[RMDB]
RNA sequence: GGGAACGACUCGAGUAGAGUCGAAAAGAAUAUAAGAGCGCAGUAACUGUGAGAGCAAACUGCGCCCGGACUGUAGGAUCCGGUGGCACAGCAACGCUCAAUCACAACACGCUGUGCCACAUGAAGACGCGACUAGUCCAUUCGUGGACUAGUCGCGAAAAGAAACAACAACAACAAC
Reactivity to 2A3 in 0.01 (KOAc 150mM, MgCl2 10mM, bicine 150mM(pH8.5), 24C), signal-to-noise 1, nucleotides 027 to 126: g010a010a000u060a000u040a060a100g000a040g000c000g080c000a030g000u150a250a000c040u040g000u050g030a170g030a000g140c000a030a030a030c000u000g080c000g000c000c000c000g060g000a000c000u110g070u160a070g060g030a100u000c000c000g020g000u000g000g020c000a000c000a000g000c000a000a080c280g000c000u090c080a020a050u170c030a040c000a240a190c040a090c220g000c000u000g010u000g000c000c000a000c000a000u150g010a060a000g060a040

This 177-nucleotide RNA was probed chemically with 2A3. 2A3 adducts were read by reverse transcription with SuperScript II with manganese. The reactions ran in a buffer of 150 mM KOAc, 10 mM MgCl2 and 150 mM bicine (pH 8.5), at 24 C.